[RMDB]
RNA sequence: GGGAACGACUCGAGUAGAGUCGAAAAGCUUAAUAACCUGCGCUGAGCCCUUCUCCCCCAGCUUGCCUGUGUCCUAGGGAAUUGGAAGGUGAUCCUUCACAGGAUCGUGUGGAAGUCCUGCUCGGGGUCCAAACAUGGUAAUUCGUUACCAUGUUAAGAGUUUAAGCAAAUUCGUUUGCUUAAACUCAAAAGAAACAACAACAACAAC
Reactivity to 2A3 in 0.01 (KOAc 150mM, MgCl2 10mM, bicine 150mM(pH8.5), 24C), signal-to-noise 3, nucleotides 027 to 156: g020c040u180u120a090a000u050a160a150c020c030u050g020c060g000c100u070g080a040g020c000c020c000u050u050c070u090c010c000c010c050c000a010g000c010u050u130g030c010c020u060g000u010g020u050c000c010u030a030g000g030g020a060a040u110u110g070g010a050a010g020g030u040g010a020u040c000c000u070u100c060a030c010a060g030g010a020u040c030g010u090g010u020g090g060a050a050g040u020c000c020u000g040c010u010c020g010g000g000g020u050c040c000a040a020a010c000a000u000g000g010u000a000a010u050u040c030g000u010u000a000c000c000a000u000g000u000u010a030a000
Reactivity to DMS in 0.01 (KOAc 150mM, MgCl2 10mM, bicine 150mM(pH8.5), 24C), signal-to-noise 2, nucleotides 027 to 156: g000c050u000u000a060a140u000a090a080c030c010u000g010c060g010c050u010g000a130g000c030c020c050u000u000c030u000c020c000c000c000c040a120g000c040u000u000g020c000c060u000g000u000g000u010c030c020u020a120g040g010g010a090a170u010u000g010g000a070a120g010g040u000g000a070u000c010c000u010u000c110a090c120a050g020g000a010u000c050g030u000g020u000g000g000a140a120g010u010c020c020u000g020c030u010c060g030g020g010g020u000c020c030a110a020a010c000a010u000g000g000u000a010a070u000u010c220g010u000u000a020c000c000a010u000g030u000u000a040a100
An RNA of 207 nucleotides, treated with 2A3 and DMS and read out base by base.
It was measured as part of the RMDB library M2RFPK.
Reactivities are given for positions 27 through 156.